Description
This 177-nucleotide RNA was probed chemically with 2A3 and DMS. The data come from the RNA Mapping Database (RMDB), library M2PK50. DMS (dimethyl sulfate) methylates the pairing face of unpaired adenines and cytosines. 2A3 adducts were read by reverse transcription with SuperScript II with manganese. For DMS the reverse transcriptase was MarathonRT. The reactions ran in a buffer of 150 mM KOAc, 10 mM MgCl2 and 150 mM bicine (pH 8.5), at 24 C.
[RMDB]
RNA sequence: GGGAACGACUCGAGUAGAGUCGAAAAGCAAGAUGCUUCGGCAUCUUGCAGUCGUAGCGCGAUCGACAGAAUUACAGCUAUGUCGAACGAGCAAGAGCGCGCACAUCAUCCCUUUCGAGGGAUGAAAGCUAAGAAUAAUUUUCGAAUUAUUCUUAGCAAAAGAAACAACAACAACAAC
Reactivity to 2A3 in 0.01 (KOAc 150mM, MgCl2 10mM, bicine 150mM(pH8.5), 24C), signal-to-noise 5, nucleotides 027 to 126: g000c000a000a000g010a010u010g000c010u060u120c230g100g000c000a000u000c000u000u000g000c010a000g040u030c040g020u030a040g000c010g000c000g010a030u020c010g010a010c010a020g100a080a030u250u160a170c060a090g070c100u100a040u080g010u010c000g010a030a040c030g020a060g080c050a060a020g030a010g100c010g000c000g020c010a020c010a050u040c000a000u000c000c000c000u010u030u040c200g100a020g000g000g000a000u000g000a030a020a000
Reactivity to DMS in 0.01 (KOAc 150mM, MgCl2 10mM, bicine 150mM(pH8.5), 24C), signal-to-noise 9, nucleotides 027 to 126: g010c000a010a010g000a010u000g010c000u000u020c210g030g010c000a000u000c000u000u000g010c000a050g010u010c030g020u000a080g010c000g010c000g010a120u000c000g010a010c000a030g000a140a140u010u010a100c300a120g010c090u000a100u000g010u000c010g010a010a060c030g010a130g020c160a080a050g010a080g000c020g010c010g020c030a110c210a150u000c000a000u000c000c000c000u000u000u010c150g000a020g000g010g010a000u000g000a010a060a100